[RMDB]
RNA sequence: GGGAACGACUCGAGUAGAGUCGAAAAUACUUAUAUCGUAUGCAGACGUAUAUUGAGUCCAUGGAACCAACAUCUCAUCAUCUACCGAUAUUCGUAGAACUCCCUUAGGGGUGUUCUCCAUUGACAAAUAUAUGGUGGUAUUCGUACCACCAUAUAUAAAAGAAACAACAACAACAAC
Reactivity to DMS in 0.01 (KOAc 150mM, MgCl2 10mM, bicine 150mM(pH8.5), 24C), signal-to-noise 6, nucleotides 027 to 126: u010a060c050u000u000a070u000a040u000c050g010u000a050u000g010c120a110g020a040c060g010u010a060u000a070u010u010g010a080g000u000c040c100a050u010g000g000a080a100c100c090a040a040c060a040u010c030u000c040a060u000c080a060u000c040u000a080c070c040g010a070u010a070u010u000c070g010u000a020g000a030a070c040u000c010c010c030u000u010a130g020g010g000g020u000g000u010u000c050u000c020c030a070u000u010g000a070c170a060a080
Reactivity to 2A3 in 0.01 (KOAc 150mM, MgCl2 10mM, bicine 150mM(pH8.5), 24C), signal-to-noise 3, nucleotides 027 to 126: u060a000c030u080u080a040u020a020u220c010g030u070a030u130g080c030a050g030a140c020g080u090a040u020a040u160u120g070a040g010u000c010c020a050u050g030g030a010a030c030c020a010a000c040a040u020c020u010c030a110u020c000a040u000c050u040a040c020c010g040a050u020a120u230u140c030g000u020a020g020a060a070c020u050c010c030c000u010u060a090g000g010g020g000u010g010u020u010c010u010c010c000a060u060u080g050a050c020a030a120